Background
An RNA of 207 nucleotides, treated with DMS and 2A3 and read out base by base. It was measured as part of the RMDB library M2RFPK. 2A3 adducts were read by reverse transcription with SuperScript II with manganese. For DMS, 2,361 sequencing reads were counted.

[RMDB]
RNA sequence: GGGAACGACUCGAGUAGAGUCGAAAAGGGUGAGACCUAGGAACCGUAGGGGUAUUCUCAAAGGAAGCUUUUGCAGUGACGCCCAUGUAAGUGGGAUAUAACAACAGAAGUCGUAUGAGUAGCCUAAUAAAUCGGACCUUCUUCGGAAGGUCCGAAACUGAUACUACCAGUUCGCUGGUAGUAUCAGAAAAGAAACAACAACAACAAC
Reactivity to DMS in 0.01 (KOAc 150mM, MgCl2 10mM, bicine 150mM(pH8.5), 24C), signal-to-noise 1, nucleotides 027 to 156: g000g020g010u000g030a120g010a060c030c000u000a150g000g000a080a030c060c040g020u010a100g010g020g010g030u000a080u010u000c030u000c020a080a060a180g020g020a140a060g000c010u000u000u000u000g000c000a140g040u000g000a200c090g010c020c010c000a020u000g020u010a050a160g080u000g020g000g000a020u000a110u010a180a110c040a040a040c040a020g020a040a060g010u000c040g000u000a050u010g010a080g000u000a090g020c040c070u000a050a060u000a050a130a100u000c010g000g010a020c000c040u000u010c020u000u020c300g000g060a090a020g030g020u000c000c000g000a000a020a080
Reactivity to 2A3 in 0.01 (KOAc 150mM, MgCl2 10mM, bicine 150mM(pH8.5), 24C), signal-to-noise 3, nucleotides 027 to 156: g050g010g010u050g040a130g030a040c010c020u060a080g060g080a050a090c060c050g040u100a060g000g030g000g000u050a120u140u070c040u020c010a030a040a010g090g010a050a010g030c000u000u010u080u060g020c070a030g010u010g030a050c070g010c010c010c000a020u060g060u120a130a120g010u010g000g000g000a010u020a010u010a060a030c050a010a020c000a020g040a030a010g050u070c060g000u130a060u090g020a020g030u030a020g010c000c010u050a110a090u080a130a090a010u040c000g000g000a000c000c000u000u000c000u000u010c060g070g000a000a000g000g000u020c000c000g000a000a010a000
Overview:
The 2A3 profile rests on 2,379 reads.